Chemical mapping of a 177-nucleotide RNA with 2A3. The 2A3 profile rests on 827 reads. The RNA was probed in 150 mM KOAc, 10 mM MgCl2 and 150 mM bicine (pH 8.5) at 24 C.
RNA sequence: GGGAACGACUCGAGUAGAGUCGAAAACGAAACCUCGGAUCUGCCUUACUUAUCUUAUUACCCGGGUUAAGUGCAGGGAUUACGAUGUCGAAAGAGCAACCUUGUGGGUCCUUGCGGGUCCUUGUGGGACUGCAGGGGCAUUCGUGCCCCUGCAGUCAAAAGAAACAACAACAACAAC
Reactivity to 2A3 in 0.01 (KOAc 150mM, MgCl2 10mM, bicine 150mM(pH8.5), 24C), signal-to-noise 2, nucleotides 027 to 126: c050g010a100a000a000c000c020u000c000g020g020a050u000c030u070g070c000c000u000u100a070c010u000u070a070u180c030u080u030a120u080u190a220c000c000c000g030g000g000u000u070a050a050g030u020g020c020a000g010g000g020a010u090u000a010c010g000a000u050g260u150c020g100a120a070a070g060a070g070c050a000a000c000c010u040u030g070u000g060g130g020u010c000c000u020u050g030c020g050g000g000u000c000c000u030u120g030u100g000g030